[RMDB]
RNA sequence: GGGAACGACUCGAGUAGAGUCGAAAAUCCUAAGUCUUUCGUUCCAAUCUAAGACAGGUGGUCCGAGAAUGGUCGGAAACGACCAUUCGUUUGACGACCACUCGAGAUUGGACGAAAGAUAUGGAAAAAGUGUAUCCACGUUCGCGUGGAUACACAACGAUCCAGAAAAGUUCGCUUUUCUGGAUCGAAAAGAAACAACAACAACAAC
Reactivity to DMS in 0.01 (KOAc 150mM, MgCl2 10mM, bicine 150mM(pH8.5), 24C), signal-to-noise 2, nucleotides 027 to 156: u000c000c000u000a060a260g030u000c010u010u010u000c000g010u010u010c020c010a050a010u000c010u000a300a190g000a250c280a070g020g070u000g010g010u000c030c030g000a080g000a000a000u000g010g010u010c020g010g010a100a070a300c000g000a060c010c050a030u040u000c010g010u000u010u010g000a160c200g000a020c000c000a030c000u000c030g000a020g000a030u010u000g000g030a040c000g000a010a010a020g000a010u000a070u000g020g020a100a100a080a060a160g000u000g000u000a010u010c000c000a010c010g030u000u020c300g020c040g040u000g000g000a000u010a000c000a000c000a020a120
Reactivity to 2A3 in 0.01 (KOAc 150mM, MgCl2 10mM, bicine 150mM(pH8.5), 24C), signal-to-noise 4, nucleotides 027 to 156: u030c000c010u020a100a040g020u000c010u010u010u000c040g140u290u150c000c010a000a000u000c000u100a190a080g120a200c070a080g020g060u000g000g010u000c010c020g030a030g000a070a000u010g000g000u000c020g000g060a170a070a070c000g000a000c000c000a000u000u000c000g000u080u050u120g020a020c020g000a000c000c000a010c010u020c000g020a030g000a000u000u000g000g000a000c000g000a000a000a010g000a000u010a050u030g040g010a060a070a050a050a050g010u000g000u000a000u000c000c000a010c010g020u060u080c240g010c010g140u000g000g000a000u000a010c000a000c000a000a000
The record gives the reactivity of an RNA of 207 nucleotides to DMS and 2A3. The 2A3 profile rests on 4,777 reads. 2A3 adducts were read by reverse transcription with SuperScript II with manganese. The reactions ran in a buffer of 150 mM KOAc, 10 mM MgCl2 and 150 mM bicine (pH 8.5), at 24 C. The data come from the RNA Mapping Database (RMDB), library RNAMAK. High DMS reactivity at an A or C suggests that its Watson-Crick edge is free. The DMS profile rests on 2,681 reads.